[RMDB]
RNA sequence: GGGAACGACUCGAGUAGAGUCGAAAAGAUAUGGAUUUGGAACCUCAACAGCGUUAAGGCAUACGUAACAUCUUUCGGAAACGAAAGUGGUAUGCCUUAACGACAUGAGGAGCCAAAUCCUAAGUCACUAGUUGUAGUCCUUCGGGACUACAACUAGAAAAGAAACAACAACAACAAC
Reactivity to DMS in 0.01 (KOAc 150mM, MgCl2 10mM, bicine 150mM(pH8.5), 24C), signal-to-noise 1, nucleotides 027 to 126: g010a070u000a300u010g000g000a000u010u000u010g010g030a050a020c000c000u000c010a020a180c300a220g000c020g000u010u000a000a010g030g030c000a010u000a010c000g000u000a000a120c230a010u010c030u010u000u010c010g000g000a150a160a300c000g010a010a010a000g020u000g000g030u000a000u000g000c000c000u000u010a000a000c000g000a050c120a150u000g000a020g000g010a020g010c000c000a000a010a000u000c000c000u000a010a070g000u000c020a250

The record gives the reactivity of an RNA of 177 nucleotides to DMS. Values cover nucleotides 27 to 126. For DMS the reverse transcriptase was MarathonRT. The reactions ran in a buffer of 150 mM KOAc, 10 mM MgCl2 and 150 mM bicine (pH 8.5), at 24 C.